[RMDB]
RNA sequence: GGGAACGACUCGAGUAGAGUCGAAAAUUCCAUUUGAGUAUCCUGAAAACGGGCUUUUCAGCAUGGAACGUACAUAUUAAAUAGUAGGAGUGCAUAGUGGCCCGUAUAGCAGGCAUUAACAUUCUUGAAAACGUGAAAAGGUUCGCCUUUUCACGAAGCGGUAUAAUAAGUUCGCUUAUUAUACCGCAAAAGAAACAACAACAACAAC
Reactivity to DMS in 0.01 (KOAc 150mM, MgCl2 10mM, bicine 150mM(pH8.5), 24C), signal-to-noise 2, nucleotides 027 to 156: u010u000c010c000a210u000u000u000g000a190g000u000a120u000c010c030u000g000a040a100a140a080c010g010g040g040c000u000u000u010u000c070a300g030c030a000u000g000g030a140a080c050g000u000a120c070a130u000a200u010u010a020a140a280u000a110g050u000a140g020g000a220g060u010g020c060a150u010a080g050u000g000g000c000c000c030g020u000a020u010a150g030c000a020g010g020c060a050u010u000a080a060c050a140u000u000c020u000u010g000a090a070a130a190c000g020u010g000a010a000a000a010g000g050u000u020c300g010c010c000u010u010u000u000c010a010c000g000a020a030
Reactivity to 2A3 in 0.01 (KOAc 150mM, MgCl2 10mM, bicine 150mM(pH8.5), 24C), signal-to-noise 3, nucleotides 027 to 156: u020u010c000c000a040u090u030u070g050a060g030u080a040u100c010c010u020g010a000a080a030a000c000g000g010g000c020u090u130u100u160c080a010g000c010a020u050g000g120a180a040c070g080u050a020c020a030u150a070u180u300a190a240a160u140a040g010u040a020g010g140a060g010u000g000c010a030u050a160g090u090g060g000c010c000c000g000u020a000u020a020g010c000a000g010g020c010a000u010u010a020a020c020a050u060u040c030u030u040g030a080a070a040a050c010g000u000g000a000a000a000a000g010g000u020u050c090g180c000c000u000u000u000u000c000a000c000g000a010a000